The record gives the reactivity of an RNA of 207 nucleotides to DMS and 2A3.
The reactions ran in a buffer of 150 mM KOAc, 10 mM MgCl2 and 150 mM bicine (pH 8.5), at 24 C.
RNA sequence: GGGAACGACUCGAGUAGAGUCGAAAAGGGCUUGACGCAUCGCCCGAAUACGAUGCAUGUGCUUUUGCACUAAGAUAAAUGUCCGUAUAGUAGGGGACCUAGAACCUACUCAUUAAUGUCCGAAGAGUCUGGGACGAUCAUCAGGCAAGACUAAGAACCAUGGAUACCAGUUCGCUGGUAUCCAUGGAAAAGAAACAACAACAACAAC
Reactivity to DMS in 0.01 (KOAc 150mM, MgCl2 10mM, bicine 150mM(pH8.5), 24C), signal-to-noise 2, nucleotides 027 to 156: g020g010g020c020u000u020g000a190c080g030c070a010u000c020g000c000c060c150g000a080a060u000a000c020g000a020u000g020c020a140u020g010u000g030c010u000u010u010u030g040c010a060c020u000a170a150g000a100u000a050a130a070u000g000u000c100c050g030u000a150u000a030g080u010a040g010g000g030g000a150c100c100u000a140g010a170a100c050c000u000a040c000u000c070a100u000u000a070a130u020g020u000c030c030g000a100a130g000a120g020u000c020u000g000g010g010a090c050g000a070u000c060a060u030c030a030g010g000c000a030a080g030a170c050u010a090a120g000a120a290
Reactivity to 2A3 in 0.01 (KOAc 150mM, MgCl2 10mM, bicine 150mM(pH8.5), 24C), signal-to-noise 2, nucleotides 027 to 156: g000g000g000c020u050u030g090a040c030g020c020a000u000c010g010c000c000c010g010a030a030u130a020c040g000a010u030g020c020a040u090g010u020g010c020u180u140u210u300g000c000a030c030u080a100a040g020a080u080a070a220a030u130g020u000c010c020g030u070a040u040a050g010u020a010g000g000g000g020a020c000c040u030a040g010a030a010c030c000u010a040c040u010c040a010u030u240a190a050u160g010u000c010c050g040a120a040g020a010g060u000c000u060g040g020g010a020c050g080a050u080c020a020u010c010a000g070g000c000a030a030g030a050c020u050a130a000g040a110a050
The data come from the RNA Mapping Database (RMDB), library OK3TST. For DMS, 2,722 sequencing reads were counted. DMS adducts were read by reverse transcription with MarathonRT. For 2A3, 1,531 sequencing reads were counted.